An RNA of 177 nucleotides, treated with DMS and 2A3 and read out base by base. 2A3 adducts were read by reverse transcription with SuperScript II with manganese.
RNA sequence: GGGAACGACUCGAGUAGAGUCGAAAAGAUAUGGAUCUUAGAAGUCUUGACCCAGCUUUGAUCUCGGAAACGAGGGAGCUGCAAGUCACUAAGAUCCUAAGUCAAAAGAUAGUGUUCGCACUAUCAAGUCUUCUUGUAACUUCGGUUACAAGAAGACAAAAGAAACAACAACAACAAC
Reactivity to DMS in 0.01 (KOAc 150mM, MgCl2 10mM, bicine 150mM(pH8.5), 24C), signal-to-noise 2, nucleotides 027 to 126: g000a010u000a300u000g000g000a020u000c000u000u000a000g030a200a150g010u020c070u000u000g010a120c210c220c080a010g020c000u000u000u020g020a060u010c000u010c000g000g000a060a060a190c000g020a000g000g010g000a000g010c000u010g000c040a090a040g010u010c000a180c000u010a010a010g010a000u000c000c000u000a010a040g000u000c020a110a060a140a190g000a000u000a000g010u000g000u000u010c190g000c020a010c010u000a000u000c000a080a090
Reactivity to 2A3 in 0.01 (KOAc 150mM, MgCl2 10mM, bicine 150mM(pH8.5), 24C), signal-to-noise 3, nucleotides 027 to 126: g010a000u050a020u100g010g000a000u000c000u040u000a060g070a300a090g160u080c060u150u110g070a140c080c030c070a010g000c000u230u210u150g080a110u070c000u000c000g020g030a120a070a000c030g020a010g020g020g000a000g000c010u020g040c070a150a100g030u030c000a000c060u000a000a010g000a020u000c000c000u020a030a020g020u000c030a100a000a120a110g000a010u000a000g010u020g060u080u110c260g090c080a000c010u000a010u010c000a010a020
The data come from the RNA Mapping Database (RMDB), library TTRDEL.